[RMDB]
RNA sequence: GGGAACGACUCGAGUAGAGUCGAAAACAGUGCCGUUAUAGACCGCUGCUGCAAGUGUGUUCGGAUCAAUAUUUGUCUCAUGUGCACCUAAUCGCAUUGUUCCGCCCAUUGUCUCAACGUCAUACUGCUCAGGGAGAAUAUCAAUCACUGGAUGUGGCAGACACAUUGCCUUCGGGCAAUGUGUCUGAAAAGAAACAACAACAACAAC
Reactivity to 2A3 in 0.01 (KOAc 150mM, MgCl2 10mM, bicine 150mM(pH8.5), 24C), signal-to-noise 1, nucleotides 027 to 156: c040a030g040u000g180c020c030g040u080u040a090u010a110g140a100c030c000g000c040u080g000c000u050g040c030a060a110g030u000g000u000g040u130u120c000g050g060a040u090c080a000a040u080a000u130u040u070g080u000c000u000c010a030u140g040u060g130c060a030c060c050u240a100a030u180c030g030c120a090u000u000g000u190u060c020c010g050c040c000c000a020u030u190g050u020c000u000c010a000a020c010g040u050c040a090u080a300c030u040g040c000u030c060a050g020g040g000a010g000a050a040u140a070u270c060a080a000u110c040a010c060u040g070g030a040u030g020u060g000g000

Source: RMDB library OK3TST, as collected in RNAgym. Chemical mapping of a 207-nucleotide RNA with 2A3.